[RMDB]
RNA sequence: GGGAACGACUCGAGUAGAGUCGAAAAAGAACUACAGGCAGAAGCACGGCUUCUAUCCUCCUCAUUCGCUGCCUGGCGACGAUGAUGAGGACGAUCUGUAUGAUGAUGACGAACCUGAAGAACAUACGUUCGUAUGUUUGUUCGCAAACAUACGAACAAAAGAAACAACAACAACAAC
Reactivity to DMS in 0.01 (KOAc 150mM, MgCl2 10mM, bicine 150mM(pH8.5), 24C), signal-to-noise 4, nucleotides 027 to 126: a060g010a170a110c070u000a040c040a030g020g010c120a030g020a040a040g010c030a120c180g050g010c020u000u010c010u000a300u000c010c030u000c010c060u000c010a040u000u000c020g020c000u000g010c070c110u000g020g010c020g010a060c270g010a030u000g010a020u000g020a010g030g010a050c220g000a050u010c050u010g010u000a020u000g030a120u020g010a080u000g020a110c110g010a090a090c030c070u000g000a050a050g010a040a050c100a070u000a070c120
Reactivity to 2A3 in 0.01 (KOAc 150mM, MgCl2 10mM, bicine 150mM(pH8.5), 24C), signal-to-noise 3, nucleotides 027 to 126: a010g070a010a050c010u020a010c000a000g010g000c020a010g010a020a000g000c080a040c300g230g010c030u000u000c000u040a050u010c000c000u000c000c010u010c010a040u170u070c040g020c010u080g130c020c090u090g020g000c000g010a010c090g060a020u050g000a000u030g010a010g000g000a010c040g050a090u050c010u030g060u020a030u090g190a140u050g000a050u090g030a040c040g030a040a050c000c030u090g060a100a050g070a100a040c050a080u210a050c130
This 177-nucleotide RNA was probed chemically with DMS and 2A3. Reactivities are given for positions 27 through 126. For 2A3, 3,179 sequencing reads were counted. For 2A3 the reverse transcriptase was SuperScript II with manganese. DMS (dimethyl sulfate) methylates the pairing face of unpaired adenines and cytosines.